The record gives the reactivity of an RNA of 177 nucleotides to DMS and 2A3. The RNA was probed in 150 mM KOAc, 10 mM MgCl2 and 150 mM bicine (pH 8.5) at 24 C. For DMS, 4,358 sequencing reads were counted. Source: RMDB library OK1LIB, as collected in RNAgym. High DMS reactivity at an A or C suggests that its Watson-Crick edge is free. Reactivities are given for positions 27 through 126. The 2A3 profile rests on 2,616 reads.
RNA sequence: GGGAACGACUCGAGUAGAGUCGAAAAAUCGUGACGCCGUCCGGACCUAUCCAGGCAGGGCUGUCCUGAGCUUCGACGGGAGAAUUGACAGCAGCCCUCCAGCAGCUCAUUCGCGGUUUGACGCCGGUCUUCGGAGGGCGUUCGCGCCCUUCGAAGGAAAAGAAACAACAACAACAAC
Reactivity to DMS in 0.01 (KOAc 150mM, MgCl2 10mM, bicine 150mM(pH8.5), 24C), signal-to-noise 1, nucleotides 027 to 126: a000u080c160g000u000g000a170c140g000c130c000g000u000c170c030g000g000a300c230c090u000a300u100c070c060a040g020g000c060a030g010g000g010c010u000g010u000c080c030u020g010a150g010c010u010u010c020g000a120c160g000g000g000a050g020a080a090u020u040g010a130c100a050g000c020a030g000c000c010c010u010c020c000a050g010c060a070g020c000u010c020a010u020u020c030g000c020g000g020u010u000u010g010a120c110g010c040c030g010g010
Reactivity to 2A3 in 0.01 (KOAc 150mM, MgCl2 10mM, bicine 150mM(pH8.5), 24C), signal-to-noise 3, nucleotides 027 to 126: a000u250c100g000u120g090a010c030g000c060c000g000u000c060c000g000g000a200c000c050u090a160u000c030c050a020g020g050c040a010g020g010g000c000u010g020u050c000c030u040g030a040g050c020u050u050c020g120a100c030g050g050g010a050g030a050a120u110u100g060a020c020a030g000c000a020g000c010c000c010u030c010c000a000g000c010a000g010c010u010c020a030u090u030c040g000c020g050g000u030u050u080g040a020c020g020c000c010g040g040